[RMDB]
RNA sequence: GGGAACGACUCGAGUAGAGUCGAAAAGAUAUGGAUCUAUGGGCUUCAUCGAUCUUUAUCGGAAACGAUAAAGGGAGAAGCCAUGAGAUCCUAAGUCAAACCUCUUGGCCGUUCGCGGCCAAGAGGACGAUAUCUCGUAGUUCGCUACGAGAUAUCGAAAAGAAACAACAACAACAAC
Reactivity to 2A3 in 0.01 (KOAc 150mM, MgCl2 10mM, bicine 150mM(pH8.5), 24C), signal-to-noise 5, nucleotides 027 to 126: g020a000u050a010u120g010g000a010u010c010u030a150u180g290g260g150c020u060u050c050a230u300c070g020a020u010c000u010u000u000a010u010c000g000g000a050a040a010c010g000a000u000a000a020a000g010g000g000a040g010a010a010g000c000c010a000u050g020a020g000a000u000c000c010u010a080a000g050u020c050a090a050a270c000c000u000c000u010u000g010g020c000c010g080u080u100c300g020c010g200g000c020c000a000a000g020a000g000g000a000
Reactivity to DMS in 0.01 (KOAc 150mM, MgCl2 10mM, bicine 150mM(pH8.5), 24C), signal-to-noise 5, nucleotides 027 to 126: g010a030u000a300u010g000g000a010u000c000u000a050u010g010g020g010c010u000u000c060a300u010c200g000a060u000c000u000u000u000a010u000c000g000g010a080a120a150c000g000a020u000a000a000a020g000g010g000a040g010a010a020g020c000c000a000u000g010a030g020a010u000c000c000u000a020a100g020u000c010a130a140a220c000c000u000c000u010u000g000g020c000c010g030u000u010c300g020c020g000g010c000c000a000a000g000a000g000g000a020